[RMDB]
RNA sequence: GGGAACGACUCGAGUAGAGUCGAAAAGAUAUGGAACACAGAUUACGCGGUUGGUUAGGACAUGCAACGGUUCGGAAACGAACUAGUUGCAACAGCCUACCAACCGCGUAAUCUGUGUUCCUAAGUCCAUUAGUGAAUGCUUCGGCAUUCACUAAUGAAAAGAAACAACAACAACAAC
Reactivity to DMS in 0.01 (KOAc 150mM, MgCl2 10mM, bicine 150mM(pH8.5), 24C), signal-to-noise 2, nucleotides 027 to 126: g000a130u000a300u010g010g030a010a000c000a000c010a000g010a010u000u000a000c000g020c010g000g020u000u000g000g030u020u010a000g000g000a010c120a300u000g000c000a000a010c020g010g000u010u000c000g000g010a100a120a250c010g020a000a000c000u000a080g020u000u010g000c010a010a020c300a190g000c010c000u000a030c010c000a000a000c030c000g000c010g000u000a000a000u000c000u000g000u000g000u010u000c000c000u000a010a090g000u000c040